This 177-nucleotide RNA was probed chemically with DMS and 2A3. The RNA was probed in 150 mM KOAc, 10 mM MgCl2 and 150 mM bicine (pH 8.5) at 24 C.
[RMDB]
RNA sequence: GGGAACGACUCGAGUAGAGUCGAAAACAAGGGUAGUUCGCUACCCUUGAAAUUCUAGUCGCUAGAAAUCGAUCAAAACUAGCGACUAGAAAAACGAUCGAAAAACUCAAUUCUUCGGAAUUGAGAAGUUAUAAAGAUAGUUCGCUAUCUUUAUAACAAAAGAAACAACAACAACAAC
Reactivity to DMS in 0.01 (KOAc 150mM, MgCl2 10mM, bicine 150mM(pH8.5), 24C), signal-to-noise 3, nucleotides 027 to 126: c010a010a000g020g000g030u000a000g020u010u010c240g010c010u000a020c000c000c010u000u000g000a020a090a070u000u000c010u000a000g000u010c000g020c000u000a000g010a070a110a120u010c150g020a130u010c170a100a110a150a120c000u000a000g000c010g000a000c000u000a010g000a000a010a060a100a100c110g010a050u010c100g010a050a070a090a140a160c000u000c010a000a000u000u000c000u010u010c160g020g010a020a010u000u000g000a000g000a020a030
Reactivity to 2A3 in 0.01 (KOAc 150mM, MgCl2 10mM, bicine 150mM(pH8.5), 24C), signal-to-noise 3, nucleotides 027 to 126: c010a010a000g000g010g000u000a000g010u010u060c120g010c070u000a000c010c000c000u000u000g010a010a000a000u020u000c000u000a000g000u000c010g010c000u010a010g040a090a290a060u160c130g130a100u140c130a050a060a060a200c000u000a000g000c000g000a000c000u010a000g000a000a000a000a000a000c030g020a050u220c060g020a100a030a090a140a140c000u010c010a000a010u000u010c010u060u060c190g100g000a010a020u000u000g000a010g000a010a010